[RMDB]
RNA sequence: GGGAACGACUCGAGUAGAGUCGAAAAGACACGAGUUCCCGGAACAGACUCUCUCAACCGCCAAGUUUUGAAGGGACAAAAGUGCAAGUGCGCCUCAGCACAAAAGGCGGAACAAAACAAAAGCAAAGCACUACAAUGAAUUCGUUCAUUGUAGUGCAAAAGAAACAACAACAACAAC
Reactivity to DMS in 0.01 (KOAc 150mM, MgCl2 10mM, bicine 150mM(pH8.5), 24C), signal-to-noise 2, nucleotides 027 to 126: g000a130c080a070c110g000a280g000u010u000c000c000c000g010g030a050a090c200a100g010a100c050u000c040u000c050u010c030a050a130c040c000g010c020c010a110a150g000u000u000u010u000g000a110a110g000g000g000a050c070a030a010a050a040g020u000g010c130a080a090g010u020g030c010g010c070c030u010c040a170g000c030a040c080a020a030a050a050g010g060c000g000g000a160a070c150a030a040a030a060c190a050a060a070a080g000c160a050a100a140
Reactivity to 2A3 in 0.01 (KOAc 150mM, MgCl2 10mM, bicine 150mM(pH8.5), 24C), signal-to-noise 1, nucleotides 027 to 126: g000a000c000a000c100g030a010g040u050u000c020c020c000g000g060a020a030c030a010g070a010c000u030c000u000c000u020c080a060a190c030c020g000c010c000a070a050g000u050u050u020u170g110a090a070g050g000g040a040c020a010a210a010a010g050u060g020c020a120a140g000u010g030c000g010c010c040u080c010a010g000c050a000c010a040a040a010a000g020g030c030g010g000a040a010c030a010a060a000a000c100a030a100a010a000g110c060a170a050a020